RNA sequence: GGGAACGACUCGAGUAGAGUCGAAAAGAUAUGGAGUUGUAGGGAGCUACUGUCUCGGAAACGAGACAUUAGCUUUGAUCUACACCUCCUAAGUCAAAACACAACCACCCUUCGGGGUGGUUGUGAACGUAAUUGAGUUCUUCGGAACUCAAUUACGAAAAGAAACAACAACAACAAC
Reactivity to DMS in 0.01 (KOAc 150mM, MgCl2 10mM, bicine 150mM(pH8.5), 24C), signal-to-noise 1, nucleotides 027 to 126: g010a000u000a010u010g000g010a030g010u000u000g000u000a010g010g000g000a000g030c000u000a020c050u000g000u000c000u000c000g020g000a000a010a010c000g000a020g020a010c000a000u000u010a010g010c010u000u000u010g000a020u030c010u020a010c000a010c030c000u000c000c000u000a000a060g000u000c000a130a100a140a260c020a000c010a010a010c000c000a010c000c000c000u000u010c250g030g030g010g040u000g000g010u000u010g000u000g000a040a110

This 177-nucleotide RNA was probed chemically with DMS.
High DMS reactivity at an A or C suggests that its Watson-Crick edge is free.
Reactivities are rounded to 0.1 and cut off at 0 and 3.
The RNA was probed in 150 mM KOAc, 10 mM MgCl2 and 150 mM bicine (pH 8.5) at 24 C.
For DMS the reverse transcriptase was MarathonRT.
Reactivities are given for positions 27 through 126.